[RMDB]
RNA sequence: GGGAACGACUCGAGUAGAGUCGAAAAGCUCUGGGAGACAGAUCGAAUAACCCCGAGCGAUCGUAUCUCUUAGGGGAGAGAUCGAGUUCAGAGGCAGUCAAAGGACAUAGUCGAUCUGAUGUCCAAAGACCAUUCAUUGGUUCGCCAAUGAAUGGUCAAAAGAAACAACAACAACAAC
Reactivity to 2A3 in 0.01 (KOAc 150mM, MgCl2 10mM, bicine 150mM(pH8.5), 24C), signal-to-noise 3, nucleotides 027 to 126: g020c020u000c000u040g000g030g020a090g020a020c020a010g020a000u020c010g000a100a150u110a080a060c020c000c000c010g000a000g010c010g040a010u020c040g020u120a100u000c010u000c000u050u120a230g040g020g000g020a020g000a000g000a020u000c050g000a060g070u040u050c070a050g020a090g090g020c020a030g060u100c060a020a130a090g100g010a000c040a050u110a020g170u030c070g050a080u090c040u070g060a020u030g030u000c000c000a040a000a000
Reactivity to DMS in 0.01 (KOAc 150mM, MgCl2 10mM, bicine 150mM(pH8.5), 24C), signal-to-noise 2, nucleotides 027 to 126: g050c000u000c000u000g000g010g080a170g000a300c000a000g020a000u000c000g000a020a100u010a070a100c050c000c000c030g000a060g050c000g010a010u000c050g050u110a300u000c000u000c000u010u040a180g000g000g000g010a060g050a160g010a020u000c020g000a030g010u000u030c000a010g010a030g060g010c070a090g040u000c090a060a100a090g000g020a000c040a100u000a080g000u000c010g000a020u000c000u000g000a100u020g000u020c000c000a050a080a020